[RMDB]
RNA sequence: GGGAACGACUCGAGUAGAGUCGAAAACAUUCUGAGGUGUACAUACCCGCAUUGGGUGUGUCUGCAUUCCUCAAAGAGACCAUAAAAACUGGUCUAGAGGUGUCAUCUGUCAUGACACAGCAGAGGACCACGGACAGCUGUAGGCAGUUCAGGACUGACCCUAUUAGAAAUUCGUUUCUAAUAGGGUAAAAGAAACAACAACAACAAC
Reactivity to DMS in 0.01 (KOAc 150mM, MgCl2 10mM, bicine 150mM(pH8.5), 24C), signal-to-noise 3, nucleotides 027 to 156: c020a130u000u000c020u030g010a030g020g020u010g010u000a100c010a040u010a030c000c010c020g040c210a200u000u010g030g000g020u000g040u020g000u010c060u010g010c030a160u000u000c020c010u010c010a030a130a180g010a090g010a090c000c020a080u010a080a100a070a100a100c200u000g000g020u000c000u010a100g010a140g020g020u000g010u000c000a020u000c040u010g010u020c180a070u000g020a020c020a000c010a120g030c050a150g010a160g000g000a060c070c060a080c040g010g000a090c040a100g030c030u000g050u000a070g030g000c040a070g010u000u000c040a110g000g000a090c040u000g010
Reactivity to 2A3 in 0.01 (KOAc 150mM, MgCl2 10mM, bicine 150mM(pH8.5), 24C), signal-to-noise 4, nucleotides 027 to 156: c030a060u160u070c020u060g010a030g000g020u050g010u050a020c010a010u030a020c000c010c020g070c200a260u250u300g000g000g010u020g010u000g010u010c010u020g000c010a020u120u110c000c000u020c010a020a100a010g120a010g010a000c010c030a020u150a130a150a010a010a020c050u010g010g000u000c010u020a040g020a010g100g000u040g020u030c020a080u040c060u140g140u130c080a070u050g010a030c000a000c000a020g040c020a010g020a020g040g010a010c030c010a020c060g040g000a010c000a050g040c010u070g050u150a060g080g000c020a010g050u080u090c010a030g070g110a010c110u140g010